[RMDB]
RNA sequence: GGGAACGACUCGAGUAGAGUCGAAAAAGCAGGAUACGUCCUGCAAAUACCCUGACUUGUGGUAAGAUAAGCAAAGGCUAGAGGUGACGACCUCAAAGUCUGCGGAUCGAACCCAGUCAGGGUGAAAGCUCCACUGGUUCUUCGGAACCAGUGGAGCAAAAGAAACAACAACAACAAC
Reactivity to 2A3 in 0.01 (KOAc 150mM, MgCl2 10mM, bicine 150mM(pH8.5), 24C), signal-to-noise 1, nucleotides 027 to 126: a000g010c000a010g000g000a000u080a110c300g080u020c080c000u000g020c000a000a000a000u030a000c000c000c000u040g000a000c030u070u120g050u300g120g000u020a030a120g000a000u020a020a030g000c020a220a180a000g000g000c000u000a090g000a000g020g000u000g060a210c090g240a130c000c000u000c000a010a050a000g000u030c020u030g000c000g000g000a000u000c000g000a000a000c000c000c000a000g000u030c000a000g030g050g000u000g000a040a000a000
This 177-nucleotide RNA was probed chemically with 2A3. The reactions ran in a buffer of 150 mM KOAc, 10 mM MgCl2 and 150 mM bicine (pH 8.5), at 24 C. It was measured as part of the RMDB library RFM100.